[RMDB]
RNA sequence: GGGAACGACUCGAGUAGAGUCGAAAAUAAAAAUGACAAAAAAUACUGCGCCUGCAUUGACACCGAAAAGCCCUGGUGAGGCUAUUGGGUUUCGUGUAAGUGCUUGCAUCAACAAACCUGAGACAGCGGAGUAGUUGUCAUUCGUGACAACUACUCCAAAAGAAACAACAACAACAAC
Reactivity to 2A3 in 0.01 (KOAc 150mM, MgCl2 10mM, bicine 150mM(pH8.5), 24C), signal-to-noise 2, nucleotides 027 to 126: u160a010a040a050a000a010u230g020a040c040a000a080a010a100a000a010u120a110c020u040g030c020g000c000c000u000g000c010a020u040u300g000a020c020a000c000c040g030a000a030a080a000g010c000c000c000u060g140g100u260g130a140g030g010c000u030a140u020u000g070g000g040u000u010u060c020g000u000g000u020a100a120g000u020g160c000u000u110g000c000a030u100c020a070a060c020a070a110a030c000c000u020g060a010g000a010c040a000g080c100
Description:
This 177-nucleotide RNA was probed chemically with 2A3. 2A3 adducts were read by reverse transcription with SuperScript II with manganese. Conditions: 150 mM KOAc, 10 mM MgCl2 and 150 mM bicine (pH 8.5), 24 C. Values cover nucleotides 27 to 126. Source: RMDB library OK1LIB, as collected in RNAgym.